[RMDB]
Annotation: Structure probing data (DMS and 2A3) for a 177-nucleotide construct. Reactivities are rounded to 0.1 and cut off at 0 and 3. For DMS the reverse transcriptase was MarathonRT.
RNA sequence: GGGAACGACUCGAGUAGAGUCGAAAAGACCUUCAGUUCGCUGAAGGUCGAUGAUGGUAAGAGAGAUUACCAUCAGUUAAGUGAUAUGGAUAAGAUCUCUCAGUGAACGUGCUUUCGAGCACGUUAAGCUGUCUCUUAUGUUCGCAUAAGAGACAGCAAAAGAAACAACAACAACAAC
Reactivity to DMS in 0.01 (KOAc 150mM, MgCl2 10mM, bicine 150mM(pH8.5), 24C), signal-to-noise 4, nucleotides 027 to 126: g010a010c000c000u000u000c000a010g010u000u010c210g020c010u000g010a020a000g000g020u000c000g010a030u000g020a010u010g000g010u000a030a130g010a030g010a020g000a030u000u000a040c010c000a000u000c000a020g010u000u010a070a110g010u010g010a130u000a130u000g010g010a140u010a070a070g010a030u000c000u000c010u000c010a200g000u000g020a020a020c000g010u000g010c000u000u000u010c230g020a010g010c000a010c000g010u010u000a010a130
Reactivity to 2A3 in 0.01 (KOAc 150mM, MgCl2 10mM, bicine 150mM(pH8.5), 24C), signal-to-noise 6, nucleotides 027 to 126: g000a000c000c000u000u000c010a020g010u020u110c180g010c120u000g000a000a000g000g000u000c000g000a000u000g000a000u000g000g050u030a160a020g010a000g000a000g000a030u000u010a000c000c010a000u010c010a010g110u070u210a140a050g090u070g170a120u100a100u300g220g060a080u070a170a090g030a060u000c010u000c000u010c010a020g070u040g200a030a000c000g000u010g000c000u050u080u130c190g050a010g000c000a000c020g000u000u000a010a000

The RNA was probed in 150 mM KOAc, 10 mM MgCl2 and 150 mM bicine (pH 8.5) at 24 C.